An RNA of 207 nucleotides, treated with DMS and 2A3 and read out base by base. The DMS profile rests on 1,779 reads. For DMS the reverse transcriptase was MarathonRT.
[RMDB]
RNA sequence: GGGAACGACUCGAGUAGAGUCGAAAAUCAGAAAUACAUUUGAGGAUGUGGGAAUUCUGACCGGAGACGUCCAGAUUAACCCCGAGGCGAGCUGUUUGAUCAUGACGACGGAAAUUCUGAGGAGCAUGCUUUACCGCGGCGCUGAUCUUAUUCGCGAGAAUCGGUUACAAUUCGUUGUAACCGAUUCAAAAGAAACAACAACAACAAC
Reactivity to DMS in 0.01 (KOAc 150mM, MgCl2 10mM, bicine 150mM(pH8.5), 24C), signal-to-noise 1, nucleotides 027 to 156: u000c050a150g020a130a050a140u000a060c060a100u000u000u000g010a110g010g050a050u000g030u000g050g010g010a130a180u000u000c020u010g020a130c020c030g010g020a200g010a150c130g000u040c040c020a080g010a100u000u000a110a100c050c000c020c010g030a060g010g070c030g000a080g000c020u010g010u000u000u000g010a160u010c050a170u020g020a080c020g000a110c020g010g010a070a090a130u000u000c050u010g000a160g000g010a060g020c020a070u010g000c030u000u000u000a050c050c050g000c070g010g000c080g040c020u010g000a050u000c020u000u020a130u010u030c000g000c050g010a300
Reactivity to 2A3 in 0.01 (KOAc 150mM, MgCl2 10mM, bicine 150mM(pH8.5), 24C), signal-to-noise 2, nucleotides 027 to 156: u070c000a000g130a040a090a000u170a070c070a060u050u050u160g030a050g030g000a030u080g040u130g070g020g040a000a060u110u000c030u020g010a060c000c050g070g090a090g010a030c020g010u020c020c010a030g000a080u110u110a070a050c000c000c050c010g030a010g060g000c020g000a030g070c060u080g050u100u070u080g060a030u070c010a040u160g030a030c040g000a010c000g070g130a050a100a060u270u110c050u070g030a040g020g010a010g070c030a030u120g000c000u020u090u110a060c030c000g010c020g020g060c040g050c020u060g020a000u000c000u050u170a150u070u030c020g030c110g060a020